[RMDB]
RNA sequence: GGGAACGACUCGAGUAGAGUCGAAAAACAUGGGCUUCCUGGCCAAGAUUAACUGGCGCGGCGGAGAAACACAGGCCUUACAUCUGUUGGAUGAGCGUCUUAAAGUGGAGCAGCAUGCGUUUGAGCGUACGCACCACAGUUUCGACUGUGGUGCGUAAAAAGAAACAACAACAACAAC
Reactivity to DMS in 0.01 (KOAc 150mM, MgCl2 10mM, bicine 150mM(pH8.5), 24C), signal-to-noise 1, nucleotides 027 to 126: a090c060a020u000g000g020g020c020u000u000c000c000u000g040g020c040c030a110a090g010a100u000u000a090a070c130u030g000g040c050g040c060g030g030c030g010g010a060g010a120a110a020c090a050c070a110g000g020c080c030u010u000a150c090a060u000c000u010g000u000u010g010g030a080u010g000a070g000c090g010u000c020u010u000a040a060a070g010u010g020g000a110g000c010a020g000c060a060u000g000c050g010u000u000u000g000a100g050c040g020

Source: RMDB library OK2TRN, as collected in RNAgym. Structure probing data (DMS) for a 177-nucleotide construct. Reactivities are given for positions 27 through 126. The RNA was probed in 150 mM KOAc, 10 mM MgCl2 and 150 mM bicine (pH 8.5) at 24 C.